[RMDB]
RNA sequence: GGGAACGACUCGAGUAGAGUCGAAAAUCGAAGCCGAACCUGAUGAUGUGUCAAUAAACUGAGGCAGGAACGAAAGGAAGAACAGUGCAACUUUCGGGUUUAAUACACUAACAAUUACGCCUUGUACUGGUAGACAACAAUUCGUUGUUGUCUACCAAAAAGAAACAACAACAACAAC
Reactivity to 2A3 in 0.01 (KOAc 150mM, MgCl2 10mM, bicine 150mM(pH8.5), 24C), signal-to-noise 3, nucleotides 027 to 126: u030c010g030a040a000g030c030c000g000a050a060c020c000u020g000a020u020g000a000u040g070u020g050u120c080a070a050u120a190a090a030c020u020g020a020g070g000c010a010g010g050a030a050c040g030a060a030a010g080g030a070a090g030a060a030c020a030g040u040g060c000a010a030c030u000u060u030c040g000g000g030u000u000u060a080a070u090a030c070a020c130u110a170a010c050a050a080u120u070a040c080g030c020c000u030u070g030u060a040c020
Reactivity to DMS in 0.01 (KOAc 150mM, MgCl2 10mM, bicine 150mM(pH8.5), 24C), signal-to-noise 4, nucleotides 027 to 126: u010c070g000a100a090g010c060c020g010a030a200c040c010u020g020a070u010g000a150u000g030u000g000u020c150a110a070u010a030a090a090c020u010g010a170g010g010c020a050g000g000a060a090c040g010a020a050a040g010g020a070a080g050a080a080c140a060g000u000g010c070a090a060c040u000u000u020c040g020g000g010u000u000u010a070a040u000a070c190a020c110u000a080a120c090a020a050u010u000a040c150g000c030c030u000u000g000u000a050c170
An RNA of 177 nucleotides, treated with 2A3 and DMS and read out base by base. Values cover nucleotides 27 to 126. For 2A3, 2,467 sequencing reads were counted. The DMS profile rests on 2,764 reads.